[RMDB]
RNA sequence: GGGAACGACUCGAGUAGAGUCGAAAAACUUUGUACGAAUGUCAGUGAAAUUGAAUUAAACAACGAAAAAUGCUUCAUGGCUUAACGGAGAUUUAUGAGGAAAACCGAACUUGAGGCCCACGUCAGUCAUUAUCAGUACCUUCGGGUACUGAUAAUGAAAAGAAACAACAACAACAAC
Reactivity to 2A3 in 0.01 (KOAc 150mM, MgCl2 10mM, bicine 150mM(pH8.5), 24C), signal-to-noise 3, nucleotides 027 to 126: a000c030u110u040u110g050u070a030c040g050a140a050u100g020u070c020a030g090u040g130a100a020a050u130u070g060a030a040u070u090a180a120a060c030a040a030c050g110a030a090a050a000a020u060g000c010u020u050c030a050u080g060g000c020u060u040a120a010c010g080g000a090g010a070u040u110u220a140u130g090a100g050g050a010a090a000a050c000c010g000a010a030c010u020u030g010a000g040g000c000c020c000a050c030g110u080c030a010g040u000
Reactivity to DMS in 0.01 (KOAc 150mM, MgCl2 10mM, bicine 150mM(pH8.5), 24C), signal-to-noise 2, nucleotides 027 to 126: a030c080u020u000u000g030u000a150c120g000a060a050u000g010u000c020a040g000u020g000a070a100a090u010u020g000a090a090u010u000a080a120a130c070a030a050c100g010a030a020a090a080a090u000g020c050u000u000c050a050u000g000g000c080u000u000a070a080c060g010g000a030g000a170u000u000u000a050u010g000a090g020g000a050a030a070a040c050c010g010a120a040c030u000u000g000a040g010g000c000c080c090a070c150g030u030c110a090g020u020
Structure probing data (2A3 and DMS) for a 177-nucleotide construct.
DMS adducts were read by reverse transcription with MarathonRT.
The DMS profile rests on 1,268 reads.
The data come from the RNA Mapping Database (RMDB), library RFMREP.
Conditions: 150 mM KOAc, 10 mM MgCl2 and 150 mM bicine (pH 8.5), 24 C.